Structure probing data (2A3 and DMS) for a 177-nucleotide construct. The RNA was probed in 150 mM KOAc, 10 mM MgCl2 and 150 mM bicine (pH 8.5) at 24 C. Values cover nucleotides 27 to 126.
[RMDB]
RNA sequence: GGGAACGACUCGAGUAGAGUCGAAAAUAAUGCCACUUCGGUGGCAUUAGCAGGUACGUAAGCCCUAUCAAGUACAAAAUCCCAAACAACAAGAUAGGCAAAUAAUGCAUAGCUUCGGCUAUGCAAACUGAUCUUCGUUUUUCGAAACGAAGAUCAGAAAAGAAACAACAACAACAAC
Reactivity to 2A3 in 0.01 (KOAc 150mM, MgCl2 10mM, bicine 150mM(pH8.5), 24C), signal-to-noise 1, nucleotides 027 to 126: u040a000a000u000g010c010c000a000c000u060u060c220g130g010u010g000g010c010a000u000u010a000g020c010a000g100g150u040a010c040g020u030a150a020g010c000c000c000u020a020u000c020a070a000g000u020a030c000a040a060a000a070u030c020c000c010a060a060a090c080a020a010c020a020a020g000a000u000a010g020g030c000a030a040a000u250a060a070u100g020c000a010u000a000g010c010u040u030c280g040g000c000u000a000u000g000c000a000a000a000
Reactivity to DMS in 0.01 (KOAc 150mM, MgCl2 10mM, bicine 150mM(pH8.5), 24C), signal-to-noise 2, nucleotides 027 to 126: u000a010a000u000g010c000c000a000c000u010u010c190g050g040u010g000g000c010a000u000u010a010g050c170a080g040g000u000a020c020g000u020a110a110g040c140c010c000u040a000u020c020a070a150g010u000a010c120a080a050a070a090u000c000c000c020a100a040a110c110a050a030c040a160a170g000a010u010a020g000g000c070a190a040a080u010a070a110u000g000c030a010u000a030g010c020u000u010c290g050g010c000u000a000u000g000c000a030a010a120